[RMDB]
An RNA of 177 nucleotides, treated with DMS and read out base by base.
Source: RMDB library TTRINS, as collected in RNAgym.
Conditions: 150 mM KOAc, 10 mM MgCl2 and 150 mM bicine (pH 8.5), 24 C.

RNA sequence: GGGAACGACUCGAGUAGAGUCGAAAAGAUAUGGAAUGUCUAGGACCACCAUAAUCGCGAUAAGCUGGCAUCGGAAACGAUGCCCAGCUUUUGACGCGGAUAUGGUGGUCCUAGACAUUCCUAAGUCGUGUUAUAAUAGGUUCGCCUAUUAUAACACAAAAGAAACAACAACAACAAC
Reactivity to DMS in 0.01 (KOAc 150mM, MgCl2 10mM, bicine 150mM(pH8.5), 24C), signal-to-noise 3, nucleotides 027 to 126: g000a100u010a300u010g010g010a010a000u000g000u010c010u000a000g000g000a020c010c000a030c000c000a000u000a010a020u000c000g060c000g010a150u010a030a010g020c000u010g010g010c010a010u000c030g020g000a150a120a230c000g020a010u010g000c190c020c020a010g000c010u000u000u000u010g020a190c070g020c000g010g000a030u000a010u000g000g030u000g000g000u000c000c000u000a010g000a000c000a000u000u000c010c010u000a020a060g010u010c140